An RNA of 207 nucleotides, treated with DMS and 2A3 and read out base by base. The 2A3 profile rests on 1,552 reads.
[RMDB]
RNA sequence: GGGAACGACUCGAGUAGAGUCGAAAAGAACACUUAACGACGCGAUUUUUAGGAAAGGAUUUGAAGAAGUACGCUAAAAUUUGCACCUUAAAACUUUCCCGCGCACACUUGGAAGCAAAAGACUUUAAGUUGGAAACACUUUGCGCCGAAUACAAAAGUCCAAUUGAUAAUUCGUUAUCAAUUGGACAAAAGAAACAACAACAACAAC
Reactivity to DMS in 0.01 (KOAc 150mM, MgCl2 10mM, bicine 150mM(pH8.5), 24C), signal-to-noise 1, nucleotides 027 to 156: g020a080a140c050a070c060u020u000a100a120c030g010a050c040g000c010g000a120u000u000u000u000u050a080g010g020a070a040a090g020g000a190u000u000u010g080a090a130g010a080a070g000u000a040c080g010c090u090a050a070a050a220u020u000u010g010c020a080c010c020u000u020a020a050a090a090c020u000u010u020c000c000c000g020c040g000c080a020c050a070c070u010u010g030g010a030a050g050c020a100a120a130a150g040a030c050u000u000u000a030a020g010u000u010g000g000a150a110a100c060a040c100u020u000u000g030c020g000c030c010g000a110a050u000a240c120a060a060a070a160
Reactivity to 2A3 in 0.01 (KOAc 150mM, MgCl2 10mM, bicine 150mM(pH8.5), 24C), signal-to-noise 3, nucleotides 027 to 156: g030a040a000c050a030c040u110u130a120a020c070g050a040c030g030c040g030a070u020u080u030u060u300a020g010g000a020a020a020g020g040a070u010u100u180g050a040a050g020a030a040g030u040a020c040g010c040u080a090a040a070a180u110u090u100g030c010a020c000c000u070u050a010a060a010a060c000u020u010u000c000c000c010g000c000g010c000a010c000a020c040u040u060g040g010a020a010g060c020a010a090a050a110g040a030c010u060u110u110a080a000g040u060u030g070g000a060a060a020c050a010c060u060u010u030g010c010g030c010c060g020a030a020u180a060c040a010a060a020a000

The DMS profile rests on 1,888 reads. The RNA was probed in 150 mM KOAc, 10 mM MgCl2 and 150 mM bicine (pH 8.5) at 24 C. 2A3 adducts were read by reverse transcription with SuperScript II with manganese.